[RMDB]
RNA sequence: GGGAACGACUCGAGUAGAGUCGAAAAAAGCGCUUGCAACCAGACUCGGUCGUGGGGGCUCAGCGGGCAUGCGUGCCCGUGUACUCCCCCAUGCUCCGGGCCAGCAUCAGUUCUGGCGGUUGGUUAAGUAUAGCUAACCCUUCGGGGUUAGCUAUACAAAAGAAACAACAACAACAAC
Reactivity to DMS in 0.01 (KOAc 150mM, MgCl2 10mM, bicine 150mM(pH8.5), 24C), signal-to-noise 2, nucleotides 027 to 126: a050a000g030c120g010c000u000u000g020c140a070a010c010c040a260g000a220c020u060c010g050g010u000c000g010u000g000g000g020g000g010c180u030c290a300g020c040g020g010g010c000a020u020g030c160g000u010g000c000c000c000g020u000g000u000a140c280u000c000c020c000c000c030a010u000g000c140u000c030c000g010g030g010c020c000a000g000c020a210u020c100a180g020u010u020c000u000g010g050c280g050g000u000u000g000g010u010u000a050a160
Reactivity to 2A3 in 0.01 (KOAc 150mM, MgCl2 10mM, bicine 150mM(pH8.5), 24C), signal-to-noise 2, nucleotides 027 to 126: a010a000g080c080g020c070u100u200g020c050a040a060c000c020a020g030a190c000u020c020g030g000u040c000g000u000g010g000g000g000g000c010u020c070a030g020c000g000g020g010c010a000u050g020c110g180u030g000c000c000c000g010u010g000u010a030c020u000c000c000c000c000c000a000u000g010c010u000c000c010g000g010g010c020c000a020g010c000a150u100c080a080g040u170u040c010u040g010g010c020g060g020u010u020g000g080u030u110a090a040